RNA sequence: GGGAACGACUCGAGUAGAGUCGAAAAAGAACUCAACGAGGCUAGUAUUUUGCAUUUGAGGAAAAUGCAAGUCAAAACCAAAAUGAGUAUCAGCUCACAAUCCUUGGAUUGGCUACUGCCAAAGACAAGUGGCAGUUAAGUUCGCUUAACUGCCACUAAAAGAAACAACAACAACAAC
Reactivity to 2A3 in 0.01 (KOAc 150mM, MgCl2 10mM, bicine 150mM(pH8.5), 24C), signal-to-noise 1, nucleotides 027 to 126: a000g010a010a010c010u020c030a060a010c030g040a030g040g000c010u060a030g010u060a130u020u190u050u000g000c000a010u010u000u000g160a180g110g240a000a010a000a000u010g000c000a000a000g010u000c000a020a060a020a060c010c000a000a130a000a000u030g020a000g010u000a300u200c010a020g060c000u030c010a020c050a020a140u130c010c020u060u100g020g000a050u060u010g000g010c020u140a170c060u170g030c010c000a070a020a040g100a030c010a050
Reactivity to DMS in 0.01 (KOAc 150mM, MgCl2 10mM, bicine 150mM(pH8.5), 24C), signal-to-noise 1, nucleotides 027 to 126: a070g010a060a060c010u000c000a020a020c110g020a300g000g000c010u000a270g000u000a040u000u020u000u000g010c010a010u000u000u040g000a280g010g000a110a000a000a000u000g000c000a000a000g000u020c010a070a120a090a110c010c000a000a070a110a000u010g000a030g000u010a090u020c040a080g000c090u000c010a040c160a050a050u000c050c010u010u000g050g030a020u000u000g000g000c010u000a070c220u030g000c010c040a060a030a060g020a060c100a050